Chemical mapping of a 207-nucleotide RNA with 2A3. The RNA was probed in 150 mM KOAc, 10 mM MgCl2 and 150 mM bicine (pH 8.5) at 24 C. For 2A3, 647 sequencing reads were counted. For 2A3 the reverse transcriptase was SuperScript II with manganese. It was measured as part of the RMDB library RNAMAK.
RNA sequence: GGGAACGACUCGAGUAGAGUCGAAAAUAAGACAUUCGUGUCUUAAUGAUUGGGGUCUGGUCGUAGGAACUACUUCGAUGAAAGGCUGAAGCCUCCACGGCCUGGAGAAGCUGAAGACCAGACGGAGGCACCCGCGUACAUCACUUUCGAGUGAUAAGUUGACUAUUGGGUUCGCCCAAUAGUCAACAAAAGAAACAACAACAACAAC
Reactivity to 2A3 in 0.01 (KOAc 150mM, MgCl2 10mM, bicine 150mM(pH8.5), 24C), signal-to-noise 2, nucleotides 027 to 156: u090a070a000g000a020c040a040u090u260c300g120u150g020u120c040u030u010a080a090u110g150a060u100u110g030g020g140g020u000c020u010g000g000u010c020g040u070a020g000g080a130a060c130u240a170c060u090u000c070g290a300u200g040a060a000a040g040g000c010u000g030a100a000g030c010c000u020c010c010a010c010g000g000c000c000u010g010g000a010g000a000a000g020c040u090g060a150a010g010a020c000c000a040g020a010c010g000g020a000g000g000c010a100c020c000c000g070c010g000u020a100c050a120u030c000a000c050u110u180u140c270g080a000g020u090g010a020u120a080a110